Record summary: Chemical mapping of a 177-nucleotide RNA with DMS. The RNA was probed in 150 mM KOAc, 10 mM MgCl2 and 150 mM bicine (pH 8.5) at 24 C. The DMS profile rests on 758 reads. For DMS the reverse transcriptase was MarathonRT.
RNA sequence: GGGAACGACUCGAGUAGAGUCGAAAACAGGGGGAUGGCCCGCCGGUGAAGGGCUUUUUGUGGCAGCCGAACAGUUCCUGCCAGACGGGCUUCACGGCAGCGGAAAUCGAAAAGCUUAAAAACCGCACUACUCAGUGCGUUUCGACGCACUGAGUAGAAAAGAAACAACAACAACAAC
Reactivity to DMS in 0.01 (KOAc 150mM, MgCl2 10mM, bicine 150mM(pH8.5), 24C), signal-to-noise 1, nucleotides 027 to 126: c080a120g000g010g030g050g020a170u010g010g000c030c010c020g010c090c020g020g060u010g000a160a150g010g000g010c010u000u000u010u000u000g030u010g020g020c060a070g010c060c010g010a040a090c260a000g000u010u010c010c010u020g000c000c110a040g020a110c090g020g020g010c030u010u040c040a150c040g010g000c000a050g020c060g000g000a080a050a040u020c040g000a030a010a070a030g010c060u000u010a010a020a040a170a030c000c040g050c230a300